[RMDB]
Structure probing data (DMS and 2A3) for a 177-nucleotide construct. The reactions ran in a buffer of 150 mM KOAc, 10 mM MgCl2 and 150 mM bicine (pH 8.5), at 24 C. High DMS reactivity at an A or C suggests that its Watson-Crick edge is free. The DMS profile rests on 1,290 reads.
RNA sequence: GGGAACGACUCGAGUAGAGUCGAAAAGAUAUGGACCGGUACAUAGCGAAGAACUUAAUCGGAAACGAUUAAGGGAGCUAGUACCCGGUCCUAAGUCAAAACGACCAGCAGUUCGCUGCUGGUCGAAGUUUAAGUUCGAGUUCGCUCGAACUUAAACAAAAGAAACAACAACAACAAC
Reactivity to DMS in 0.01 (KOAc 150mM, MgCl2 10mM, bicine 150mM(pH8.5), 24C), signal-to-noise 1, nucleotides 027 to 126: g010a050u000a150u000g000g000a030c000c000g010g000u000a000c000a300u010a040g020c000g000a100a130g030a170a200c000u000u000a000a000u010c000g000g000a040a020a060c000g010a030u000u000a010a000g000g000g000a010g000c000u020a100g020u000a000c070c030c060g000g000u000c000c000u000a000a080g000u000c000a080a050a130a210c020g000a030c000c000a000g000c000a010g040u000u000c300g020c030u000g000c000u000g000g000u000c010g000a000a060
Reactivity to 2A3 in 0.01 (KOAc 150mM, MgCl2 10mM, bicine 150mM(pH8.5), 24C), signal-to-noise 1, nucleotides 027 to 126: g000a000u040a020u020g010g000a000c000c010g000g000u020a040c140a220u300a120g040c030g300a300a020g030a020a010c030u010u010a010a010u010c000g000g000a010a020a010c010g010a010u000u010a000a010g000g040g000a020g000c010u030a090g010u020a030c060c030c020g010g000u000c000c000u020a000a000g000u000c000a000a040a160a230c000g010a000c040c010a000g000c000a010g010u090u300c300g040c160u000g000c090u100g000g000u010c000g000a010a000

DMS adducts were read by reverse transcription with MarathonRT.
For 2A3, 2,325 sequencing reads were counted.
It was measured as part of the RMDB library TTRDES.